[RMDB]
RNA sequence: GGGAACGACUCGAGUAGAGUCGAAAACCACGUAAGUCUCCAUGUCCUCAAGCCGCCUCGGAGGACGAAGGAGUGGCAGGGCCUCCAGGUCCGCUAUUCGACCACAUGCCUUUUGGAGAUGAUCAUGGCUAGAUCGGACCUUCGGGUCCGAUCUAGCAAAAGAAACAACAACAACAAC
Reactivity to 2A3 in 0.01 (KOAc 150mM, MgCl2 10mM, bicine 150mM(pH8.5), 24C), signal-to-noise 1, nucleotides 027 to 126: c030c010a050c110g050u030a060a040g000u030c000u000c000c000a070u170g040u000c000c000u000c030a030a050g050c010c050g020c000c070u000c000g000g000a010g000g000a000c000g000a020a000g050g000a020g000u000g000g040c010a010g000g000g000c000c000u130c170c150a080g000g000u010c010c040g010c050u000a000u090u060c070g110a190c000c010a000c040a040u300g000c030c030u070u080u070u110g000g010a080g010a010u050g000a000u130c010a030u070g090
This 177-nucleotide RNA was probed chemically with 2A3.